Structure probing data (2A3 and DMS) for a 177-nucleotide construct.
RNA sequence: GGGAACGACUCGAGUAGAGUCGAAAAACGAGCAGGGCCGCGCGGACAUCGCGUUAUUCGUCGGCGCCGACACGGACGAGCUGGUGUUCACCAAAAAUGCCACCGAGGCGCUCAACCUGGUGUCAUACAUUCGAUCGUAUUUCGAUACGAUCGAAUGAAAAGAAACAACAACAACAAC
Reactivity to 2A3 in 0.01 (KOAc 150mM, MgCl2 10mM, bicine 150mM(pH8.5), 24C), signal-to-noise 3, nucleotides 027 to 126: a000c040g010a030g000c040a050g000g100g070c030c010g000c000g010c020g040g040a080c040a090u130c050g010c040g080u060u160a190u180u120c110g070u030c040g070g010c050g030c030c020g100a030c010a020c010g020g010a000c010g030a020g030c030u030g040g040u040g020u050u050c060a090c120c000a000a000a090a030a120u040g000c000c000a000c030c020g130a060g020g000c080g020c060u070c060a040a090c000c000u000g040g000u030g020u020c000a010u050a100
Reactivity to DMS in 0.01 (KOAc 150mM, MgCl2 10mM, bicine 150mM(pH8.5), 24C), signal-to-noise 3, nucleotides 027 to 126: a060c060g010a050g020c040a110g030g020g010c030c060g020c040g000c020g000g010a070c080a070u010c050g020c040g000u010u010a100u000u000c040g000u000c010g020g000c080g010c030c020g020a110c060a050c060g000g000a030c020g010a110g010c060u000g000g010u000g010u010u010c060a120c030c040a040a070a100a120a040u000g010c110c000a020c010c010g000a060g010g010c040g010c160u010c180a070a100c020c010u000g000g020u000g010u000c020a040u000a200